[RMDB]
RNA sequence: GGGAACGACUCGAGUAGAGUCGAAAAACUUAACGGCGAUGAACACCGGGUACGAAACCUGCUACACUUGCGGCCGCUGCGCGGAUGCCACGAACCCACAGCCUCUCCAGGAGCGCUGCACUGUGCUAUUAGAGGCAGUGUUCGCACUGCCUCUAAUAAAAGAAACAACAACAACAAC
Reactivity to 2A3 in 0.01 (KOAc 150mM, MgCl2 10mM, bicine 150mM(pH8.5), 24C), signal-to-noise 3, nucleotides 027 to 126: a000c070u140u060a090a040c070g050g020c030g090a090u100g040a060a010c030a000c030c020g000g020g030u050a050c060g040a180a030a040c000c030u010g030c020u060a040c040a050c080u050u080g030c040g010g030c000c010g020c000u070g000c020g000c000g020g000a020u060g010c000c020a050c030g020a030a040c000c000c000a010c010a020g020c000c000u020c010u060c030c030a050g060g070a040g000c060g010c010u010g000c020a010c040u060g030u050g040c010u030
Reactivity to DMS in 0.01 (KOAc 150mM, MgCl2 10mM, bicine 150mM(pH8.5), 24C), signal-to-noise 2, nucleotides 027 to 126: a090c040u020u020a110a100c100g000g000c060g020a080u000g000a050a050c120a040c080c010g020g010g060u080a020c080g000a040a060a080c020c010u040g000c050u000a080c170a160c050u000u000g000c080g040g000c030c100g010c030u000g060c000g000c040g020g000a060u000g020c030c050a010c070g000a130a080c040c040c010a100c010a020g010c000c040u030c050u000c070c070a100g000g020a070g040c100g040c020u000g000c070a030c050u010g060u010g010c090u000
Structure probing data (2A3 and DMS) for a 177-nucleotide construct. For DMS, 1,553 sequencing reads were counted. For 2A3, 1,520 sequencing reads were counted. For 2A3 the reverse transcriptase was SuperScript II with manganese. The reactions ran in a buffer of 150 mM KOAc, 10 mM MgCl2 and 150 mM bicine (pH 8.5), at 24 C. Source: RMDB library RFM100, as collected in RNAgym.